Chemical mapping of a 177-nucleotide RNA with DMS and 2A3. 2A3 adducts were read by reverse transcription with SuperScript II with manganese. The 2A3 profile rests on 10,286 reads. For DMS the reverse transcriptase was MarathonRT.
[RMDB]
RNA sequence: GGGAACGACUCGAGUAGAGUCGAAAAACUUUUUGAUUCGUCAAAAAGUAACUACCGAGAAUGCGACUCGGUAUACGCAAAUAACCCUUGGAAACAAGGGAACAAACUAACGUUUCGACGUUAGUAAAUGGUUACUGAAAUUCGUUUCAGUAACCAUAAAAGAAACAACAACAACAAC
Reactivity to DMS in 0.01 (KOAc 150mM, MgCl2 10mM, bicine 150mM(pH8.5), 24C), signal-to-noise 6, nucleotides 027 to 126: a030c000u000u000u000u000u000g010a020u000u010c170g020u000c010a000a000a000a010a010g000u000a050a120c130u000a020c000c000g000a020g010a110a080u010g030c260g010a070c000u010c000g010g010u000a010u010a050c260g010c210a080a060a070u010a100a110c000c000c000u000u000g010g000a130a120a140c000a000a010g010g010g010a060a030c160a070a100a030c000u010a000a000c000g000u000u000u010c160g010a020c000g010u000u000a010g000u000a020a050
Reactivity to 2A3 in 0.01 (KOAc 150mM, MgCl2 10mM, bicine 150mM(pH8.5), 24C), signal-to-noise 5, nucleotides 027 to 126: a000c000u010u010u000u000u010g000a010u020u030c060g030u010c070a000a000a000a000a010g010u020a030a060c020u020a020c000c010g010a010g050a090a150u270g130c120g140a060c020u000c010g010g030u000a030u020a010c030g010c040a070a080a020u140a100a140c010c000c000u000u000g000g000a010a040a020c000a000a010g010g000g020a030a010c000a000a090a000c000u010a000a000c000g010u000u040u120c190g130a020c010g000u000u000a000g000u030a020a050